RNA sequence: GGGAACGACUCGAGUAGAGUCGAAAAGUACCGAAGAUCGAAGCUACCUAAUCCCCGAGCCCGGUAGCGAGAUCGAGGUACGACGGGGCGAGGGGCACAGGAAUUGCAGUUACCAAAUCCCGUCCGGGUAACUGCAAUUCCGACACGGACGGGUACAGCAUAGGAUGGUAUUCGUACCAUCCUAUGCAAAAGAAACAACAACAACAAC
Reactivity to DMS in 0.01 (KOAc 150mM, MgCl2 10mM, bicine 150mM(pH8.5), 24C), signal-to-noise 1, nucleotides 027 to 156: g020u000a090c010c010g000a190a090g010a090u000c000g010a230a300g010c000u000a030c000c000u010a180a130u010c070c010c000c020g010a070g050c050c030c080g060g040u020a000g030c020g000a190g020a050u000c000g010a280g000g040u000a010c000g030a060c160g000g000g030g000c050g030a110g010g000g010g020c050a090c030a130g010g000a010a010u000u000g010c010a020g000u000u000a020c030c000a070a040a170u010c050c020c070g000u020c000c060g010g090g020u000a010a000c010u000g020c000a000a000u010u000c010c030g030a060c040a120c090g000g040a030c010g000g150g000u000a080c030a100
Reactivity to 2A3 in 0.01 (KOAc 150mM, MgCl2 10mM, bicine 150mM(pH8.5), 24C), signal-to-noise 2, nucleotides 027 to 156: g000u000a000c000c010g020a180a000g000a010u000c000g060a170a000g020c010u000a010c000c020u130a160a150u180c050c050c020c040g040a090g060c030c040c010g000g000u000a000g010c000g000a000g000a000u010c000g000a030g010g000u000a010c000g000a000c010g000g020g010g080c150g010a040g020g010g000g020c090a030c080a180g020g040a030a030u000u000g000c000a000g000u010u000a010c000c000a060a020a130u140c000c010c040g090u050c030c040g080g000g000u000a000a000c000u000g000c010a010a000u010u010c000c010g000a010c040a030c050g030g020a020c030g030g000g040u130a070c080a020
An RNA of 207 nucleotides, treated with DMS and 2A3 and read out base by base.
The 2A3 profile rests on 1,184 reads.
For DMS the reverse transcriptase was MarathonRT.